About this RNA: The data come from the RNA Mapping Database (RMDB), library TTRDEL. Chemical mapping of a 177-nucleotide RNA with 2A3 and DMS. DMS adducts were read by reverse transcription with MarathonRT. 2A3 is a SHAPE reagent: it acylates the 2'-hydroxyl of flexible nucleotides of all four kinds. The DMS profile rests on 1,265 reads. The RNA was probed in 150 mM KOAc, 10 mM MgCl2 and 150 mM bicine (pH 8.5) at 24 C.
[RMDB]
RNA sequence: GGGAACGACUCGAGUAGAGUCGAAAAGAUAUGGAGAGGUCGGCGUGCGAUGAAAUAGCUCGGAAACGAGCUAUGGAGCACCCGACUACCCACCUCCUAAGUCAAAAGACCCAGUUCGCUGGGUCAACGUUUACACUACCUUCGGGUAGUGUAAACGAAAAGAAACAACAACAACAAC
Reactivity to 2A3 in 0.01 (KOAc 150mM, MgCl2 10mM, bicine 150mM(pH8.5), 24C), signal-to-noise 2, nucleotides 027 to 126: g010a010u030a020u020g010g020a040g080a150g100g000u020c010g040g010c290g030u000g000c010g300a300u020g010a000a000a000u000a000g000c000u000c010g000g010a020a010a000c000g000a040g000c010u010a010u000g000g010a010g000c000a000c000c010c020g000a010c010u000a010c000c030c020a200c060c000u000c010c000u010a010a000g000u020c010a070a000a000a250g020a010c000c000c020a000g030u050u040c300g050c120u000g000g000g000u010c010a010a000
Reactivity to DMS in 0.01 (KOAc 150mM, MgCl2 10mM, bicine 150mM(pH8.5), 24C), signal-to-noise 2, nucleotides 027 to 126: g040a020u000a020u000g000g000a030g000a300g000g000u020c020g000g000c300g050u000g010c010g000a130u000g000a120a090a010u000a000g010c000u010c000g010g000a020a040a000c010g000a000g000c000u000a010u000g020g000a020g000c000a000c020c000c000g000a000c010u000a030c100c040c030a230c280c000u000c000c000u000a020a090g010u000c000a130a050a160a100g000a000c000c000c000a000g000u000u000c220g020c000u020g000g000g020u000c000a010a040